Description: Source: RMDB library RNAMAK, as collected in RNAgym. An RNA of 207 nucleotides, treated with 2A3 and read out base by base. The reactions ran in a buffer of 150 mM KOAc, 10 mM MgCl2 and 150 mM bicine (pH 8.5), at 24 C.
RNA sequence: GGGAACGACUCGAGUAGAGUCGAAAAGAGGGGUAGUUCGCUACCCCUCAAAAAAACCUUUGUGCCAAUCUUCUUUGAUCUUAGGCCAGCCCAUUGGGCUGCCUAAGGGAGAAGGAUGGCACUCUGGUAAAAAACCCAAUACUUCGGUAUUGGGUAAGCUGUAUGUCAGAUUCGUCUGACAUACAGCAAAAGAAACAACAACAACAAC
Reactivity to 2A3 in 0.01 (KOAc 150mM, MgCl2 10mM, bicine 150mM(pH8.5), 24C), signal-to-noise 1, nucleotides 027 to 156: g030a000g010g000g000g000u010a010g010u010u080c150g020c120u010a010c010c020c000c000u000c000a020a010a000a000a010a000a000c000c010u010u000u000g000u000g040c000c010a090a120u010c050u100u000c000u230u280u070g050a060u040c000u010u000a020g030g160c160c020a000g000c030c000c040a170u100u300g020g000g000c000u000g000c020c000u000a000a000g020g000g000a040g000a000a020g000g000a000u020g000g010c000a000c000u000c000u020g000g000u080a000a000a000a150a000a150c000c000c000a030a000u000a000c010u020u050c300g100g000u000a000u000u010g000g000g040u010a070a000
Reactivities are given for positions 27 through 156.